[RMDB]
Notes: Chemical mapping of a 177-nucleotide RNA with 2A3 and DMS. The reactions ran in a buffer of 150 mM KOAc, 10 mM MgCl2 and 150 mM bicine (pH 8.5), at 24 C. Reactivities are given for positions 27 through 126. For 2A3, 585 sequencing reads were counted. The DMS profile rests on 704 reads. For DMS the reverse transcriptase was MarathonRT.

RNA sequence: GGGAACGACUCGAGUAGAGUCGAAAACAGCGAAAAGCAGUGGAUCCAGGAAGACCAGGAAAGCUACCUUUCAUUUAAUGCUGCAGGCAGCUCUAGGAGCCAGAUCAAAUCGGCCCUGGACAACGCCCGCAGUCAAAUGCUUCGGCAUUUGACUGCGAAAAGAAACAACAACAACAAC
Reactivity to 2A3 in 0.01 (KOAc 150mM, MgCl2 10mM, bicine 150mM(pH8.5), 24C), signal-to-noise 1, nucleotides 027 to 126: c000a000g070c060g070a040a000a090a070g000c060a010g070u110g060g050a000u000c010c010a010g060g060a040a070g080a040c020c020a000g050g030a170a030a000g060c040u040a060c010c000u000u070u170c020a130u150u100u000a110a100u300g000c030u030g040c010a000g010g000c010a000g000c110u000c010u030a010g000g050a040g000c020c000a030g000a050u250c180a110a000a000u000c020g000g000c000c040c000u010g000g000a010c000a000a080c130g060c030c010
Reactivity to DMS in 0.01 (KOAc 150mM, MgCl2 10mM, bicine 150mM(pH8.5), 24C), signal-to-noise 1, nucleotides 027 to 126: c010a200g000c000g000a000a120a120a180g040c300a100g000u050g000g020a060u020c060c000a000g000g000a210a280g000a040c000c010a230g000g000a040a090a050g000c090u040a120c140c020u000u070u000c000a000u000u020u000a060a070u020g010c000u000g000c000a130g020g000c000a060g000c190u020c000u000a000g000g000a090g000c000c090a020g000a020u020c300a000a060a300u020c000g000g000c060c000c020u000g000g000a000c000a180a120c240g000c000c000